[RMDB]
RNA sequence: GGGAACGACUCGAGUAGAGUCGAAAAGUACGAUUUUUCGAAAUCGUACGAAGGUCAGGUGGCAGCACCACGACACUGGUCGCGGCGACCGAGCCGAACAGUAUAUGUGUAAUUUCGAUUACACAAACACUGUGAUAGGAUUCGUCCUAUCACAGUGAAAAGAAACAACAACAACAAC
Reactivity to DMS in 0.01 (KOAc 150mM, MgCl2 10mM, bicine 150mM(pH8.5), 24C), signal-to-noise 7, nucleotides 027 to 126: g010u000a000c000g010a000u000u010u000u000u010c150g010a020a010a000u000c000g020u000a000c000g000a090a090g010g010u010c050a250g000g020u000g000g010c010a040g010c010a060c010c000a020c160g000a130c270a100c300u000g010g010u010c130g030c010g010g020c010g000a030c010c030g000a300g000c000c000g000a110a090c190a060g010u010a090u000a090u000g020u000g000u000a010a010u000u000u020c180g000a020u000u000a000c000a000c010a040a090a180
Reactivity to 2A3 in 0.01 (KOAc 150mM, MgCl2 10mM, bicine 150mM(pH8.5), 24C), signal-to-noise 6, nucleotides 027 to 126: g000u000a000c000g000a010u000u010u010u040u140c140g080a010a000a010u000c000g010u000a000c010g010a110a020g020g010u110c050a020g000g030u040g120g000c020a000g000c010a010c020c010a010c040g130a040c050a030c070u050g010g020u040c150g010c000g020g000c000g020a020c010c010g000a020g000c000c000g010a020a010c020a020g180u090a060u050a040u300g020u000g000u000a010a020u030u090u120c200g060a030u000u010a000c000a000c000a000a040a000
Structure probing data (DMS and 2A3) for a 177-nucleotide construct.
2A3 adducts were read by reverse transcription with SuperScript II with manganese.
For DMS the reverse transcriptase was MarathonRT.
Source: RMDB library M2PK50, as collected in RNAgym.
The reactions ran in a buffer of 150 mM KOAc, 10 mM MgCl2 and 150 mM bicine (pH 8.5), at 24 C.